Chemical mapping of a 207-nucleotide RNA with DMS and 2A3. The RNA was probed in 150 mM KOAc, 10 mM MgCl2 and 150 mM bicine (pH 8.5) at 24 C.

RNA sequence: GGGAACGACUCGAGUAGAGUCGAAAAUACACAGUCUGGCUCCAAAGUCAGUGUCUAAGCCACGCACGGUGGCUCAUGCCUAUCAUUCCAGCACUUUGGGAGGCCAAGGUGGGAGGGUCUCUUGAGGUCAGCAGUUCGAGGCUGCAGUGAGCCAUGAACUCACAUGAAGUUUCGACUUCAUGUGAGUAAAAGAAACAACAACAACAAC
Reactivity to DMS in 0.01 (KOAc 150mM, MgCl2 10mM, bicine 150mM(pH8.5), 24C), signal-to-noise 2, nucleotides 027 to 156: u000a110c050a140c030a110g030u000c030u010g050g060c000u000c030c080a040a060a120g020u000c020a070g000u010g030u000c080u000a100a110g000c000c030a020c030g030c110a140c180g060g030u000g000g030c000u000c000a020u020g020c030c030u000a100u010c070a120u020u000c010c040a120g020c060a070c040u010u000u000g020g020g000a120g020g030c020c010a050a050g010g020u000g010g010g030a150g000g040g010u000c040u000c050u000u000g000a050g000g010u030c020a000g020c020a050g010u000u000c050g010a110g030g000c050u010g020c020a110g010u010g020a050g030c030c010a090u000g000a080
Reactivity to 2A3 in 0.01 (KOAc 150mM, MgCl2 10mM, bicine 150mM(pH8.5), 24C), signal-to-noise 6, nucleotides 027 to 156: u140a000c050a010c010a050g080u020c020u030g010g010c010u050c090c070a070a060a020g040u060c030a030g020u030g030u060c050u080a050a030g020c020c010a040c030g110c020a100c130g150g000u010g000g000c000u000c000a020u070g010c000c010u120a130u200c060a060u110u110c040c030a020g020c100a020c010u020u020u030g030g020g020a040g020g000c020c030a050a050g090g010u160g020g020g030a060g010g010g000u000c000u000c000u020u040g030a020g000g030u050c050a010g000c020a010g020u060u120c070g020a050g050g000c010u020g000c030a070g030u030g070a000g000c000c000a020u050g060a040